[RMDB]
RNA sequence: GGGAACGACUCGAGUAGAGUCGAAAACAACCCAACUCCUACUCAAUACGUCCUCGUCGUACAGAAGGGUAACAUGUUUUCCGAACAUCCGCGCUUGGGUAUACGAGUAUACACCUUACCCAACCCUCCAACCACCUAAAGUUCGCUUUAGGUGGAACAUCCUGUUCAAGUUCGCUUGAACAGGAUGAAAAGAAACAACAACAACAAC
Reactivity to DMS in 0.01 (KOAc 150mM, MgCl2 10mM, bicine 150mM(pH8.5), 24C), signal-to-noise 2, nucleotides 027 to 156: c040a120a300c030c000c010a060a140c090u010c010c030u030a040c010u020c020a090a140u010a060c040g000u010c020c020u000c010g020u010c010g000u010a130c070a080g030a120a050g020g010g020u000a090a130c050a090u000g010u000u000u000u000c050c030g010a100a090c060a050u020c050c020g020c060g010c090u020u000g000g030g020u000a030u010a110c050g020a150g040u010a180u000a060c050a080c020c030u000u000a020c010c000c010a060a120c010c010c000u000c000c030a080a180c010c010a020c000c000u000a000a010a020g020u000u010c240g020c020u010u000u000a010g010g050u010g020g000a020a170
Reactivity to 2A3 in 0.01 (KOAc 150mM, MgCl2 10mM, bicine 150mM(pH8.5), 24C), signal-to-noise 9, nucleotides 027 to 156: c050a030a070c010c000c020a040a050c040u060c020c020u050a090c020u040c080a080a090u060a090c030g060u040c020c030u040c040g060u020c020g010u040a040c020a070g080a080a050g050g010g000u060a050a040c050a080u080g030u030u040u070u070c040c050g030a060a020c040a090u080c050c050g070c020g030c130u020u030g030g000g020u020a040u020a040c040g020a010g080u030a020u040a070c090a060c030c020u040u030a020c000c000c010a030a030c010c000c010u000c020c010a050a100c010c000a010c000c000u020a020a000a000g020u050u080c130g070c090u010u000u000a000g000g000u000g000g000a000a000
Source: RMDB library M2RFPK, as collected in RNAgym. An RNA of 207 nucleotides, treated with DMS and 2A3 and read out base by base. The DMS profile rests on 4,106 reads. 2A3 adducts were read by reverse transcription with SuperScript II with manganese. The RNA was probed in 150 mM KOAc, 10 mM MgCl2 and 150 mM bicine (pH 8.5) at 24 C.